Record summary:
Chemical mapping of a 177-nucleotide RNA with DMS and 2A3. The RNA was probed in 150 mM KOAc, 10 mM MgCl2 and 150 mM bicine (pH 8.5) at 24 C. DMS adducts were read by reverse transcription with MarathonRT.

RNA sequence: GGGAACGACUCGAGUAGAGUCGAAAAACUGCGGAACGCUUCCUUGUGAUCCCACAAGGAACAACUCGUGUCAAUGGACUUUUCCGUUAAGCGAGGAACGAGUAGGAAAAGGAAACGUUCCCCAAUCGACGUCCAUGAAAUUCGUUUCAUGGACGUCAAAAGAAACAACAACAACAAC
Reactivity to DMS in 0.01 (KOAc 150mM, MgCl2 10mM, bicine 150mM(pH8.5), 24C), signal-to-noise 3, nucleotides 027 to 126: a060c090u000g030c300g000g000a060a040c070g030c060u000u000c000c010u000u000g000u030g070a150u070c040c080c040a070c020a070a200g000g010a030a040c200a050a130c000u000c010g040u000g000u010c250a030a000u010g000g000a180c300u050u000u010u000c030c000g080u000u020a140a280g000c000g000a040g000g000a050a140c080g020a250g010u000a020g000g000a030a020a010a080g020g000a010a040a040c040g010u000u000c000c000c050c090a080a050u030c130
Reactivity to 2A3 in 0.01 (KOAc 150mM, MgCl2 10mM, bicine 150mM(pH8.5), 24C), signal-to-noise 8, nucleotides 027 to 126: a010c080u100g010c040g030g020a050a010c050g010c050u000u010c000c000u010u020g110u060g090a230u090c050c050c000a000c010a030a030g050g030a010a020c010a010a000c000u000c010g040u040g130u190c080a020a060u020g030g020a040c100u110u100u200u040c020c000g020u030u040a060a010g010c000g020a020g000g010a040a020c030g010a020g030u060a040g050g030a020a110a010a010g040g010a040a030a010c000g000u000u000c020c000c000c000a050a090u110c070
2A3 adducts were read by reverse transcription with SuperScript II with manganese.